[RMDB]
RNA sequence: GGGAACGACUCGAGUAGAGUCGAAAAGAUAUGGAGCCAGGGAGAUUGAUACAGCGUUGAAAACGGUAGGCUCGGAAACGAGCCUACCGUUGGAGCUGUGUUUGAUCGAAGAACUGGCUCCUAAGUCCAUCAUUAGGCUGUUCGCAGCCUAAUGAUGAAAAGAAACAACAACAACAAC
Reactivity to DMS in 0.01 (KOAc 150mM, MgCl2 10mM, bicine 150mM(pH8.5), 24C), signal-to-noise 1, nucleotides 027 to 126: g010a120u020a300u000g000g000a050g030c010c000a000g000g000g030a280g010a020u000u000g010a020u010a000c000a020g030c000g100u010u030g010a200a090a020a030c000g040g000u010a000g020g000c000u010c010g000g000a060a090a250c020g040a000g020c010c030u000a000c000c010g000u000u000g000g010a120g030c000u000g000u000g000u000u010u030g030a010u000c000g000a230a100g010a150a130c010u000g000g000c000u000c010c000u000a000a060g020u000c030